[RMDB]
RNA sequence: GGGAACGACUCGAGUAGAGUCGAAAAGAGCUCUAGAUGCGAUUGUACACUGUUACAGCAUCUGCUAUCAGUGUGAGAUAGCUCAGGAUAGCUGGAGCUAUCUGCAACGGUGCAGACUCCAGUGACACCGUGAACAAUCGUUCAUGUCACAGAGCAGAUUAAUAAUUUAUUUCGAUAAAUUAUUAAUAAAAGAAACAACAACAACAAC
Reactivity to DMS in 0.01 (KOAc 150mM, MgCl2 10mM, bicine 150mM(pH8.5), 24C), signal-to-noise 2, nucleotides 027 to 156: g000a160g010c010u000c000u000a070g050a100u000g020c010g030a060u000u020g010u000a100c020a030c020u000g000u000u000a040c020a150g020c100a100u000c040u000g000c000u000a010u000c010a080g020u010g020u000g020a130g000a040u000a010g020c000u000c030a080g020g020a200u000a150g040c040u000g020g020a040g000c000u000a050u020c010u000g030c000a070a050c050g040g010u000g030c000a100g000a120c010u000c020c030a180g000u000g010a050c040a020c130c140g000u010g010a150a020c010a040a040u000c040g020u000u010c060a030u020g000u010c010a130c100a040g020a030g010c000a110g010
Reactivity to 2A3 in 0.01 (KOAc 150mM, MgCl2 10mM, bicine 150mM(pH8.5), 24C), signal-to-noise 2, nucleotides 027 to 156: g050a000g000c000u010c000u010a040g000a050u080g000c020g010a000u000u020g010u010a020c010a000c020u030g000u030u050a010c020a040g010c010a140u080c040u040g000c030u050a020u130c030a040g030u030g020u010g110a070g000a010u020a010g000c000u000c010a010g020g100a300u130a170g080c010u070g100g030a010g000c010u010a020u010c010u010g020c010a070a080c060g020g010u010g000c000a000g000a020c050u030c070c030a010g000u000g020a000c000a000c010c060g010u010g030a010a000c010a010a000u000c000g030u080u100c050a050u150g040u050c040a030c050a120g010a000g000c010a000g000
Source information: Source: RMDB library OK3TST, as collected in RNAgym. An RNA of 207 nucleotides, treated with DMS and 2A3 and read out base by base. Conditions: 150 mM KOAc, 10 mM MgCl2 and 150 mM bicine (pH 8.5), 24 C.